[RMDB]
RNA sequence: GGGAACGACUCGAGUAGAGUCGAAAAGGGAGGUAGGCGGGACGAAUACCUAGGACUGCAAGCAAAUCUCUUGGGUGGCAGGGUCCCCUGUGUGCUGUAGCAGAACUACAACCUCUCCCGCCGUUAGCCCUACGUCCUACUUCGGUAGGACGUAGGGAAAAGAAACAACAACAACAAC
Reactivity to DMS in 0.01 (KOAc 150mM, MgCl2 10mM, bicine 150mM(pH8.5), 24C), signal-to-noise 2, nucleotides 027 to 126: g010g000g000a040g000g050u000a140g010g000c000g000g010g050a040c180g000a030a030u000a050c300c250u000a030g010g000a180c010u000g050c010a150a070g010c050a010a080a210u010c040u000c020u020u000g000g040g000u030g030g010c040a160g020g000g010u000c040c010c010c000u010g020u000g000u000g000c030u000g000u000a100g030c000a080g000a010a170c010u000a010c080a030a100c300c020u000c000u000c000c010c000g010c000c020g020u000u010a040g030
Reactivity to 2A3 in 0.01 (KOAc 150mM, MgCl2 10mM, bicine 150mM(pH8.5), 24C), signal-to-noise 2, nucleotides 027 to 126: g050g000g020a050g000g140u100a130g010g000c040g000g000g000a020c130g000a050a030u060a130c000c030u010a000g000g040a010c000u000g000c000a010a120g010c020a030a150a180u100c050u020c010u190u110g050g010g040u200g030g040c080a150g180g130g130u210c060c040c020c010u010g040u030g020u040g060c000u040g020u110a020g000c000a010g010a040a020c000u000a010c020a040a040c010c000u050c030u030c020c010c020g010c020c000g000u030u020a020g040